RNA sequence: GGGAACGACUCGAGUAGAGUCGAAAACAGCAUCACUAAGGCCACCUGGUUGGCUGGGGAGAGGAGCACUAGGGUUGUCAAAAUGAAUAGAUCUAUGACCUGUAGACUUGCUAAAUCAGAUGUUCAAUAAACAGCACAGAUUCGUCUGUGCUGUUUAAAAAGAAACAACAACAACAAC
Reactivity to DMS in 0.01 (KOAc 150mM, MgCl2 10mM, bicine 150mM(pH8.5), 24C), signal-to-noise 2, nucleotides 027 to 126: c080a120g030c070a120u000c070a060c090u010a090a170g030g000c020c050a060c070c090u020g000g020u010u000g010g000c000u000g000g000g000g000a100g000a060g000g000a070g020c070a030c090u010a080g000g000g000u000u010g010u010c050a050a060a110a040u010g000a050a090u000a050g000a080u000c040u010a100u010g000a050c050c040u010g000u000a050g000a060c040u000u010g000c050u000a050a100a090u020c100a090g000a080u010g000u030u000c050a090a130
An RNA of 177 nucleotides, treated with DMS and read out base by base. Source: RMDB library OK2TRN, as collected in RNAgym. The RNA was probed in 150 mM KOAc, 10 mM MgCl2 and 150 mM bicine (pH 8.5) at 24 C. High DMS reactivity at an A or C suggests that its Watson-Crick edge is free. For DMS the reverse transcriptase was MarathonRT.